[RMDB]
An RNA of 177 nucleotides, treated with 2A3 and DMS and read out base by base. It was measured as part of the RMDB library OK1LIB.
RNA sequence: GGGAACGACUCGAGUAGAGUCGAAAAAUCGCCAGUUCUGAGUCAUCGGUUUUUAUUUUCACUUUUUUCUCUAAAUCGUGGAAACGGUCUUGUCUGGCAUUUUGUUUGGUGGCACGACCUUGAGGACACGCUUUUAUCGUUUCGACGAUAAAAGCGUAAAAGAAACAACAACAACAAC
Reactivity to 2A3 in 0.01 (KOAc 150mM, MgCl2 10mM, bicine 150mM(pH8.5), 24C), signal-to-noise 2, nucleotides 027 to 126: a000u070c060g000c000c000a020g050u220u000c110u110g030a000g070u080c060a020u030c080g080g000u070u000u130u110u050a130u070u050u000u010c030a030c000u020u030u000u050u040u110c080u020c020u190a030a030a080u030c020g010u020g060g050a030a090a070c050g010g010u020c000u050u080g040u050c050u040g040g000c000a000u000u000u080u130g250u070u010u050g080g000u030g020g000c080a030c090g080a080c020c000u090u170g050a030g050g030a000c000
Reactivity to DMS in 0.01 (KOAc 150mM, MgCl2 10mM, bicine 150mM(pH8.5), 24C), signal-to-noise 2, nucleotides 027 to 126: a010u050c140g040c000c000a000g000u020u000c020u010g000a040g020u010c150a050u070c040g010g040u030u000u050u010u020a080u000u020u000u010c000a020c000u010u000u010u000u000u000c190u100c300u030a040a030a020u000c050g010u010g000g000a000a030a100c070g010g010u010c040u000u000g000u000c000u040g050g040c050a110u000u000u010u000g030u000u010u030g020g000u000g000g050c060a090c110g000a110c040c010u010u030g010a080g000g000a090c240